This 177-nucleotide RNA was probed chemically with DMS and 2A3. The DMS profile rests on 6,960 reads. Values cover nucleotides 27 to 126. For DMS the reverse transcriptase was MarathonRT.
[RMDB]
RNA sequence: GGGAACGACUCGAGUAGAGUCGAAAAUACGAAAAUGCGUGAGAAGGUACAUAUAGGGACCACGUAACCCUCCAAAGUAGAAUUAGGAAGAUGGAACGAGGUCGAGUUGGAGGUUACAAUGAGUUAACACGUGCGAGCUAUUCGUAGCUCGCGCGUGAAAAGAAACAACAACAACAAC
Reactivity to DMS in 0.01 (KOAc 150mM, MgCl2 10mM, bicine 150mM(pH8.5), 24C), signal-to-noise 4, nucleotides 027 to 126: u020a060c100g020a040a060a070a050u010g010c010g020u040g020a060g020a090a080g000g010u000a040c080a090u030a100u020a090g000g000g020a080c010c010a080c060g020u000a040a040c080c000c080u020c030c010a030a000a040g000u010a090g000a030a060u010u010a230g000g000a100a070g030a100u020g010g000a110a060c040g000a060g000g010u000c010g000a080g010u020u010g000g000a080g000g000u000u000a020c080a050a060u030g000a130g010u010u030a030a140
Reactivity to 2A3 in 0.01 (KOAc 150mM, MgCl2 10mM, bicine 150mM(pH8.5), 24C), signal-to-noise 3, nucleotides 027 to 126: u190a000c010g010a040a000a000a060u110g080c050g000u070g010a060g020a040a080g050g020u110a040c040a010u190a020u120a160g040g060g030a010c010c010a030c000g000u050a020a090c000c050c050u090c000c020a070a020a010g110u090a060g040a090a050u080u000a080g100g020a040a050g040a030u150g030g050a070a070c110g000a040g030g070u050c010g000a020g040u010u000g000g020a030g040g000u000u020a020c030a010a160u190g010a050g050u060u060a060a000